[RMDB]
RNA sequence: GGGAACGACUCGAGUAGAGUCGAAAAGAACGCCGCGCCCACCAGCAGGCCGAACGCUUCCAACCACAGGGAGUGCCGCAACAACGGAAACACCAGACCGGCGAGCGCCACGCCGCGCAGCACGAUGGUCCUAACCUUUCUUCGGAAAGGUUAGGACAAAAGAAACAACAACAACAAC
Reactivity to DMS in 0.01 (KOAc 150mM, MgCl2 10mM, bicine 150mM(pH8.5), 24C), signal-to-noise 1, nucleotides 027 to 126: g010a020a110c130g000c020c020g000c020g010c010c060c000a070c080c030a060g000c040a190g000g000c050c090g030a110a170c080g080c020u000u010c060c110a040a100c080c050a100c230a080g000g000g010a060g020u020g010c010c010g000c070a040a050c090a050a070c010g000g000a130a090a010c090a030c060c040a070g020a100c060c010g000g000c010g000a090g000c040g020c030c060a110c150g000c080c060g000c020g070c050a080g010c070a020c110g000a070u000g020

The data come from the RNA Mapping Database (RMDB), library OK2TST. Structure probing data (DMS) for a 177-nucleotide construct. DMS adducts were read by reverse transcription with MarathonRT. The RNA was probed in 150 mM KOAc, 10 mM MgCl2 and 150 mM bicine (pH 8.5) at 24 C. High DMS reactivity at an A or C suggests that its Watson-Crick edge is free.